This 177-nucleotide RNA was probed chemically with 2A3 and DMS. For 2A3 the reverse transcriptase was SuperScript II with manganese. For 2A3, 13,227 sequencing reads were counted.
RNA sequence: GGGAACGACUCGAGUAGAGUCGAAAACUGUCGUUCUUCGGAACGACAGAAAGAACGCGUGGGUCACGCAAGGAGGACCGUGUGGGACGCGACAAACCCAAAAAAGCGUUCGGUUCGCCGAACGCAAGUACGAAUAGUACUUCGGUACUAUUCGUACAAAAGAAACAACAACAACAAC
Reactivity to 2A3 in 0.01 (KOAc 150mM, MgCl2 10mM, bicine 150mM(pH8.5), 24C), signal-to-noise 4, nucleotides 027 to 126: c000u000g000u000c000g010u000u010c000u020u030c190g100g010a000a010c010g010a000c000a000g000a010a010a000g030a080a020c030g000c010g020u050g060g120g160u040c020a010c040g010c100a070a080g160g070a120g020g110a090c040c050g000u030g010u020g040g070g050a010c000g010c000g000a020c050a020a070a070c000c000c000a060a070a020a020a020a010g000c010g010u000u010c010g000g020u030u040c230g030c040c000g000a000a000c000g000c000a000a000
Reactivity to DMS in 0.01 (KOAc 150mM, MgCl2 10mM, bicine 150mM(pH8.5), 24C), signal-to-noise 4, nucleotides 027 to 126: c010u000g000u000c000g020u000u000c000u000u020c160g030g000a000a000c000g010a000c010a000g000a020a050a080g010a110a100c090g010c000g020u000g010g010g020u000c020a050c020g000c120a090a090g010g010a170g010g010a040c090c020g020u000g030u010g010g000g010a030c020g000c020g000a070c070a080a080a140c000c000c010a000a020a060a080a110a120g010c000g000u010u000c000g020g010u000u010c190g010c010c000g000a010a010c000g000c000a010a010
The reactions ran in a buffer of 150 mM KOAc, 10 mM MgCl2 and 150 mM bicine (pH 8.5), at 24 C.